[RMDB]
RNA sequence: GGGAACGACUCGAGUAGAGUCGAAAAGAAAUCAUUCUUAUCAGAGUAUACAAAUACGAUGAUAAACAGUUGAAGCGAAUCUUGAUUUGCUUUUCCUAAACCUGAUUCUUUUAGAAUCAGGUUUUUGGACAUGUAGAUUUUUCGAAAUCUACAUGUCAAAAGAAACAACAACAACAAC
Reactivity to DMS in 0.01 (KOAc 150mM, MgCl2 10mM, bicine 150mM(pH8.5), 24C), signal-to-noise 9, nucleotides 027 to 126: g010a070a070a100u020c050a090u010u010c090u000u000a000u000c000a010g000a300g000u000a010u000a130c300a100a070a050u000a010c010g010a210u000g000a010u000a010a030a120c240a080g000u010u010g010a060a050g000c060g010a030a040u000c100u020u010g000a010u000u000u000g010c010u000u000u000u000c000c000u000a010a010a010c000c000u000g010a010u000u000c000u000u020u010u040a040g000a010a000u000c000a000g000g000u000u000u000u000u010g000
Reactivity to 2A3 in 0.01 (KOAc 150mM, MgCl2 10mM, bicine 150mM(pH8.5), 24C), signal-to-noise 9, nucleotides 027 to 126: g030a010a030a010u060c020a040u110u060c040u030u020a010u010c000a000g010a010g040u000a030u010a110c130a070a270a010u020a010c010g020a030u010g000a000u010a000a040a020c090a060g120u190u180g170a110a020g070c050g060a050a050u070c070u130u160g030a040u030u030u090g130c010u030u030u030u010c000c000u010a020a000a000c000c000u000g000a000u010u010c020u030u290u090u210a050g010a000a000u000c000a000g000g000u000u000u000u010u020g010
Source: RMDB libraries RFM100 and RFMREP, as collected in RNAgym.
An RNA of 177 nucleotides, treated with DMS and 2A3 and read out base by base.
Conditions: 150 mM KOAc, 10 mM MgCl2 and 150 mM bicine (pH 8.5), 24 C.